About this RNA: The record gives the reactivity of an RNA of 177 nucleotides to DMS and 2A3.
[RMDB]
RNA sequence: GGGAACGACUCGAGUAGAGUCGAAAAGUCUAGAGGUUCGCCUCUAGACAAAGAACGCUAAUUCGCUAAGCGAGGCCGCGAGAGCGGGCAUACGCGAAGAAAAAAGAGCCCUGUUCGCAGGGCUCAACAACGCAUGUAUGUUCGCAUACAUGCGUUGAAAAGAAACAACAACAACAAC
Reactivity to DMS in 0.01 (KOAc 150mM, MgCl2 10mM, bicine 150mM(pH8.5), 24C), signal-to-noise 2, nucleotides 027 to 126: g010u020c000u000a000g010a000g020g000u000u000c300g010c000c000u000c000u000a000g010a000c000a010a110a090g010a130a180c030g030c080u000a110a160u000u000c010g010c000u000a110a160g010c020g020a110g020g040c020c000g030c000g010a150g000a230g010c000g000g000g040c050a110u000a070c170g010c010g020a030a040g020a000a000a080a060a150a130g000a030g020c000c000c000u000g010u010u000c210g010c040a010g000g000g020c000u000c000a000a040
Reactivity to 2A3 in 0.01 (KOAc 150mM, MgCl2 10mM, bicine 150mM(pH8.5), 24C), signal-to-noise 2, nucleotides 027 to 126: g000u010c000u020a010g000a000g020g030u080u070c170g080c070c010u000c000u010a000g010a000c020a000a010a000g030a090a000c040g030c100u040a130a110u060u030c010g000c030u050a050a000g000c010g040a030g090g070c020c000g000c010g020a050g010a000g060c000g020g120g000c020a100u100a070c040g000c020g020a040a030g100a040a140a000a000a000a000g010a000g000c010c000c000u000g010u020u020c180g000c070a000g010g010g000c000u000c000a000a000
The DMS profile rests on 1,429 reads. 2A3 adducts were read by reverse transcription with SuperScript II with manganese. Reactivities are rounded to 0.1 and cut off at 0 and 3.